[RMDB]
RNA sequence: GGGAACGACUCGAGUAGAGUCGAAAAGAAAGAAAGAAAAAAAGUGUUGGUCUUUUUGCUCUUUUGUAAUUAAAUCCGGAUGUACCUCAAAAGACUUAAGACUGUGGUGAUAAGAUGCUUUCCUCAAGAUGACCUAUUGAUUCGUCAAUAGGUCAUCAAAAGAAACAACAACAACAAC
Reactivity to 2A3 in 0.01 (KOAc 150mM, MgCl2 10mM, bicine 150mM(pH8.5), 24C), signal-to-noise 3, nucleotides 027 to 126: g040a010a040a020g030a050a050a020g040a030a100a000a000a000a000a020g080u130g080u130u090g120g010u000c000u000u000u030u100u030g040c030u000c000u040u020u020u030g060u110a110a080u080u120a160a130a100u100c020c040g000g000a070u110g040u130a120c000c000u050c030a030a010a010a000g030a030c000u040u060a030a000g030a010c020u010g040u080g070g080u090g060a100u100a100a030g020a040u100g010c000u060u000u000c020c020u120c100a030a030
Reactivity to DMS in 0.01 (KOAc 150mM, MgCl2 10mM, bicine 150mM(pH8.5), 24C), signal-to-noise 4, nucleotides 027 to 126: g010a090a070a090g000a050a060a100g000a010a010a030a070a040a050a080g010u000g020u010u010g010g000u010c000u000u010u020u000u010g010c120u000c010u000u000u000u000g010u020a060a080u020u020a040a080a100u000c040c030g000g010a080u000g000u010a050c130c080u010c050a030a040a050a030g000a060c040u000u020a040a030g000a060c030u000g020u000g000g010u000g000a100u020a070a080g010a070u000g000c060u010u000u000c020c010u010c190a060a090